[RMDB]
RNA sequence: GGGAACGACUCGAGUAGAGUCGAAAACUCAGGAUUCGUCCUGAGAAAAAGGGGUCCACAUCGAUCUUGUCAGCCUGGGACUGAAGCCUCCACGGUCCCAAGGGCUUGGAUUUAGGGAGUGGACGGAGGCACCCAAAAAGACCGAUUCGUCGGUCAACACUUAUCCGCAGUUCGCUGCGGAUAAGUGAAAAGAAACAACAACAACAAC
Reactivity to 2A3 in 0.01 (KOAc 150mM, MgCl2 10mM, bicine 150mM(pH8.5), 24C), signal-to-noise 2, nucleotides 027 to 156: c000u010c010a010g000g010a010u030u060c130g020u010c060c010u000g030a010g100a110a070a000a000a020g090g030g070g000u020c050c020a000c020a220u090c040g160a140u080c050u210u300g220u300c050a000g030c000c010u040g000g040g010a030c000u000g030a110a010g000c000c000u020c000c030a030c000g020g000u050c000c000c000a010a050g100g010g000c000u070u110g090g050a070u030u030u160a060g010g060g030a100g030u030g000g010a000c000g000g000a010g010g000c000a030c000c000c000a000a210a000a000a000g000a000c000c000g030a010u100u140c150g060u030c000g140g000u000c010a010a000
An RNA of 207 nucleotides, treated with 2A3 and read out base by base. Values are in units of 0.01, from 0 to 300, in steps of 10. Conditions: 150 mM KOAc, 10 mM MgCl2 and 150 mM bicine (pH 8.5), 24 C. Source: RMDB library RNAMAK, as collected in RNAgym. Reactivities are given for positions 27 through 156.